[RMDB]
RNA sequence: GGGAACGACUCGAGUAGAGUCGAAAAAUUUUAGAGACACUAAUUUAUCUCUGAGAGCAGAGAACUCUUCCGAUUGAAAUGCACUGGAAGAUAAAUCAAUUGGAUGGAUUUCAAGGUCUAUUGCAGCUCGCACUCCGUAUUUCGAUACGGAGUGCGAAAAAGAAACAACAACAACAAC
Reactivity to 2A3 in 0.01 (KOAc 150mM, MgCl2 10mM, bicine 150mM(pH8.5), 24C), signal-to-noise 1, nucleotides 027 to 126: a000u160u090u070u110a100g020a010g030a020c040a040c070u150a020a270u020u270u090a080u050c060u000c000u000g020a020g020a000g070c070a000g050a030g030a090a020c000u000c000u060u000c000c000g040a020u000u140g020a020a090a120u160g130c120a020c060u190g040g070a120a050g000a050u200a020a050a020u000c000a000a000u030u000g020g000a030u080g040g040a030u010u140u080c080a110a000g060g000u010c000u000a070u070u210g000c040a030g000c010
Chemical mapping of a 177-nucleotide RNA with 2A3. For 2A3, 505 sequencing reads were counted. The reactions ran in a buffer of 150 mM KOAc, 10 mM MgCl2 and 150 mM bicine (pH 8.5), at 24 C. The data come from the RNA Mapping Database (RMDB), library OK1LIB.